[RMDB]
RNA sequence: GGGAACGACUCGAGUAGAGUCGAAAAAGGUAUCUAUCGAAACCAUUCUGAUGAUCAAUACAGUAUUUUUGUCGCAUUCUUAUUACGGUACGUGCAAACAUUAGUUUCCAAGCGGAAGAAACUGUGUGUGUAUUCCAGGCUUCGGCCUGGAAUACACAAAAGAAACAACAACAACAAC
Reactivity to 2A3 in 0.01 (KOAc 150mM, MgCl2 10mM, bicine 150mM(pH8.5), 24C), signal-to-noise 1, nucleotides 027 to 126: a000g160g030u030a010u100c000u080a120u100c000g150a050a210a120c020c030a160u150u000c010u050g070a110u000g000a070u010c030a060a000u190a050c000a000g180u020a180u000u060u000u170u110g120u010c060g000c000a040u120u000c040u070u050a160u120u060a110c080g000g000u030a030c030g020u040g000c000a030a300a000c000a070u090u250a070g050u000u030u020c050c030a000a090g000c000g120g000a080a050g080a050a000a000c000u000g070u000g000u000